[RMDB]
RNA sequence: GGGAACGACUCGAGUAGAGUCGAAAAUGAUGAUUCGUCAUCAGUAGGGAUAUGGACCGUCGAAAGCCAUCGAUCGAUCGUAACAUCGAGUCGGAAACGACUCGUGGAUCGGGAGGCUUUCAGACGGUCCUAAGUCGAAUAGGUGGUUCGCCACCAACUGACGGUAUUGUUUCGACAAUACCGUCAGAAAAGAAACAACAACAACAAC
Reactivity to 2A3 in 0.01 (KOAc 150mM, MgCl2 10mM, bicine 150mM(pH8.5), 24C), signal-to-noise 2, nucleotides 027 to 156: u070g000a000u010g010a020u040u090c150g050u000c110a000u000c040a020g030u090a030g010g160g010a030u020a010u060g010g000a010c010c000g010u010c020g020a010a000a000g030c000c010a120u300c040g010a030u030c000g000a000u010c020g030u050a030a050c030a140u150c050g010a000g010u000c010g000g000a030a020a000c000g140a010c010u010c000g000u000g010g000a000u000c000g000g000g000a010g000g000c000u010u010u000c010a010g010a010c020g000g040u010c000c000u000a000a010g000u000c000g020a040a020u110a190g020g010u030g020g000u060u050c150g010c080c000a000c090c000a010a040
Reactivity to DMS in 0.01 (KOAc 150mM, MgCl2 10mM, bicine 150mM(pH8.5), 24C), signal-to-noise 1, nucleotides 027 to 156: u010g040a010u000g020a050u000u010c300g020u000c010a030u000c010a170g020u020a160g020g000g000a120u000a120u010g000g000a000c000c000g070u000c030g010a030a000a020g000c000c000a300u000c120g030a070u010c000g010a070u010c000g030u000a090a000c100a090u000c000g020a030g000u000c000g000g010a060a050a080c010g000a000c000u000c000g030u010g010g010a030u000c000g000g000g000a050g020g000c000u000u000u000c000a050g020a020c000g010g030u010c000c000u000a000a080g020u000c030g040a110a240u000a200g000g010u000g010g010u000u010c130g000c000c000a030c000c000a030a090
Chemical mapping of a 207-nucleotide RNA with 2A3 and DMS.
For DMS, 3,212 sequencing reads were counted.
For DMS the reverse transcriptase was MarathonRT.
For 2A3, 2,808 sequencing reads were counted.
Reactivities are given for positions 27 through 156.
High DMS reactivity at an A or C suggests that its Watson-Crick edge is free.
Source: RMDB library RNAMAK, as collected in RNAgym.